[RMDB]
Record summary: This 177-nucleotide RNA was probed chemically with DMS. The reactions ran in a buffer of 150 mM KOAc, 10 mM MgCl2 and 150 mM bicine (pH 8.5), at 24 C. Reactivities are rounded to 0.1 and cut off at 0 and 3. DMS adducts were read by reverse transcription with MarathonRT. The DMS profile rests on 704 reads.
RNA sequence: GGGAACGACUCGAGUAGAGUCGAAAAGAUAUGGAGCAUCCUACCCACCAUCCGAAUGCUAUGAAGACCUGGACAUCGGAAACGAUGUCCAGGUUGGAGCAUCUCGGAUGAGGGAUGCUCCUAAGUCGAUAGGCCAAAAGUUCGCUUUUGGCCUAUCAAAAGAAACAACAACAACAAC
Reactivity to DMS in 0.01 (KOAc 150mM, MgCl2 10mM, bicine 150mM(pH8.5), 24C), signal-to-noise 1, nucleotides 027 to 126: g010a110u000a100u030g050g020a080g020c000a050u010c000c010u050a180c080c020c030a300c180c010a000u000c000c050g000a010a040u000g030c010u000a190u000g020a130a280g010a030c000c000u000g020g000a020c000a000u000c000g010g000a130a050a190c010g020a030u000g000u000c000c000a000g000g000u000u000g020g000a040g050c000a020u000c170u000c000g030g000a010u010g000a010g000g000g000a020u000g010c000u000c000c030u000a000a140g010u020c240